[RMDB]
RNA sequence: GGGAACGACUCGAGUAGAGUCGAAAAUCAUGUGCCUUCGGGCACAUGAAAACAUCCAGGAACGCCAAAGGAUGGAAAUAAUGGCGAACCAAUAAGGAGAAAAAAGACCCGAGUUCGCUCGGGUCAACCUAAUUUCUAGGUUCGCCUAGAAAUUAGGAAAAGAAACAACAACAACAAC
Reactivity to DMS in 0.01 (KOAc 150mM, MgCl2 10mM, bicine 150mM(pH8.5), 24C), signal-to-noise 3, nucleotides 027 to 126: u010c000a000u000g020u010g000c000c000u000u000c200g060g000g010c000a000c000a000u000g000a020a030a120a150c160a050u000c000c010a170g010g010a050a280c080g020c020c010a060a070a140g000g020a100u010g000g000a120a070a100u010a070a100u000g000g000c010g010a020a200c010c020a070a090u020a130a080g020g010a160g020a020a040a060a120a120a130g020a010c010c000c010g000a010g000u000u010c210g000c010u000c000g020g000g000u000c000a000a020
Reactivity to 2A3 in 0.01 (KOAc 150mM, MgCl2 10mM, bicine 150mM(pH8.5), 24C), signal-to-noise 3, nucleotides 027 to 126: u000c000a000u000g000u000g010c000c020u030u060c240g020g010g020c000a000c000a000u000g000a000a000a000a010c000a040u010c000c000a010g010g010a020a010c020g010c020c020a060a030a060g200g010a170u210g050g100a050a090a000u140a020a060u050g000g000c000g010a010a010c000c020a010a070u200a210a120g090g020a060g090a050a190a010a010a000a030g010a010c000c010c010g000a010g000u040u080c150g000c070u000c000g000g000g020u000c000a000a000